[RMDB]
RNA sequence: GGGAACGACUCGAGUAGAGUCGAAAAUUUUGGAAAACAGAUUGAAUCAUCAAAGACAUGGGAUUUACCGUAUUUCCAAUGGGUGAAACAACAAAAUAAUGAUUAUUAUCAACGGGUUAGCCAUAUGAAGACCACCGAAAUUCGUUUCGGUGGUCUUAAAAGAAACAACAACAACAAC
Reactivity to DMS in 0.01 (KOAc 150mM, MgCl2 10mM, bicine 150mM(pH8.5), 24C), signal-to-noise 1, nucleotides 027 to 126: u000u000u030u050g000g000a000a000a010a050c040a120g060a060u000u070g000a070a080u000c000a090u040c050a130a120a100g010a250c300a150u000g020g000g000a050u000u030u040a070c190c030g040u030a150u000u020u020c000c010a050a060u000g000g000g000u000g000a150a070a060c030a000a050c080a050a090a010a040u000a000a080u050g050a050u010u020a090u000u000a040u000c160a010a300c110g000g000g000u000u000a300g040c000c030a030u000a020u130g060
Reactivity to 2A3 in 0.01 (KOAc 150mM, MgCl2 10mM, bicine 150mM(pH8.5), 24C), signal-to-noise 1, nucleotides 027 to 126: u080u100u000u000g040g000a120a070a000a000c030a000g000a000u160u250g040a000a000u080c000a000u000c070a190a160a180g010a120c070a120u180g000g040g000a000u090u100u050a000c000c000g110u120a300u000u000u010c000c040a000a000u070g000g060g000u080g210a060a060a030c000a060a060c000a000a110a000a000u200a010a020u140g220a250u100u170a000u170u120a120u030c000a000a170c000g000g000g020u030u080a000g000c000c000a030u130a130u090g020
Source information:
Chemical mapping of a 177-nucleotide RNA with DMS and 2A3. Source: RMDB library OK1LIB, as collected in RNAgym. Conditions: 150 mM KOAc, 10 mM MgCl2 and 150 mM bicine (pH 8.5), 24 C. Values cover nucleotides 27 to 126.